[RMDB]
Chemical mapping of a 207-nucleotide RNA with 2A3 and DMS.
For DMS the reverse transcriptase was MarathonRT.
The RNA was probed in 150 mM KOAc, 10 mM MgCl2 and 150 mM bicine (pH 8.5) at 24 C.

RNA sequence: GGGAACGACUCGAGUAGAGUCGAAAAUAUUGCCGUCCAUGUUGGUUCACGUACAGCCAUGUCCGUAUCCUGGUGGUCUCUAACGCCACACUCGCCUGGUGUAGCCAUGUUAGUAAUGCAUGCGAAAGGAUGGUAUUGAACUGUCGAACUACUAUGAGUUUUCCGACUAAUUCGUUAGUCGGAAAACAAAAGAAACAACAACAACAAC
Reactivity to 2A3 in 0.01 (KOAc 150mM, MgCl2 10mM, bicine 150mM(pH8.5), 24C), signal-to-noise 2, nucleotides 027 to 156: u130a070u120u080g050c010c020g010u060c020c000a060u100g020u080u070g070g040u060u050c060a030c110g030u060a020c050a030g000c050c040a040u060g050u060c050c010g010u090a110u050c040c020u050g030g000u010g020g000u020c020u010c020u070a090a070c050g040c020c000a030c000a010c030u080c050g090c010c060u040g080g000u070g030u070a030g050c030c000a010u010g010u030u030a060g090u140a100a060u100g030c010a020u020g030c030g100a040a000a040g040g010a000u030g030g000u040a080u010u090g050a060a050c010u080g060u060c020g060a090a020c010u060a030c010u040a090u240g040a080
Reactivity to DMS in 0.01 (KOAc 150mM, MgCl2 10mM, bicine 150mM(pH8.5), 24C), signal-to-noise 1, nucleotides 027 to 156: u000a030u000u010g030c000c050g020u000c000c100a140u020g020u010u000g010g040u010u000c030a070c090g000u000a100c010a050g000c020c000a050u000g090u000c040c000g060u000a110u010c020c050u000g060g110u020g000g020u000c030u000c040u000a080a100c030g030c040c010a050c050a010c030u000c030g060c070c060u040g000g020u010g000u000a090g030c010c100a070u020g040u000u020a050g000u000a090a060u010g020c040a090u000g000c100g020a120a080a070g000g060a060u000g000g010u000a130u000u000g000a050a060c040u000g010u000c050g000a030a010c050u000a090c050u000a090u000g020a280